This 177-nucleotide RNA was probed chemically with DMS and 2A3.
Values cover nucleotides 27 to 126.
It was measured as part of the RMDB library TTRDEL.
For 2A3 the reverse transcriptase was SuperScript II with manganese.

[RMDB]
RNA sequence: GGGAACGACUCGAGUAGAGUCGAAAAGAUAUGGAGAAUGCUCGAUAAGCUACUAUUCGGAAACGAAUACUAGCUUUUGACGAGCACUCCUAAGUCAAACACUCCGUUACUUCGGUAACGGAGUGAACGUGUACACACAGUUCGCUGUGUGUACACGAAAAGAAACAACAACAACAAC
Reactivity to DMS in 0.01 (KOAc 150mM, MgCl2 10mM, bicine 150mM(pH8.5), 24C), signal-to-noise 3, nucleotides 027 to 126: g010a050u000a280u030g010g030a020g000a150a050u010g000c000u000c000g010a110u000a040a000g020c000u010a010c130u000a000u000u000c000g030g020a110a120a120c000g000a010a000u020a010c120u000a000g000c000u000u000u010u000g010a180c110g010a010g000c000a040c000u010c000c000u010a030a090g010u000c030a120a080a190c010a010c000u010c000c000g010u000u000a000c000u000u010c230g020g010u000a000a010c010g000g010a000g010u000g000a010a060
Reactivity to 2A3 in 0.01 (KOAc 150mM, MgCl2 10mM, bicine 150mM(pH8.5), 24C), signal-to-noise 2, nucleotides 027 to 126: g020a000u070a010u080g030g020a010g030a300a300u090g010c010u000c010g090a110u040a250a010g000c000u000a010c000u000a010u020u000c010g000g050a070a030a040c020g000a000a000u000a010c020u000a020g010c000u030u010u050u050g070a040c000g000a000g000c000a000c010u000c000c020u000a150a020g030u010c030a010a090a100c000a000c000u010c000c000g000u000u010a010c010u050u100c300g160g000u000a000a000c000g000g010a010g000u000g000a010a000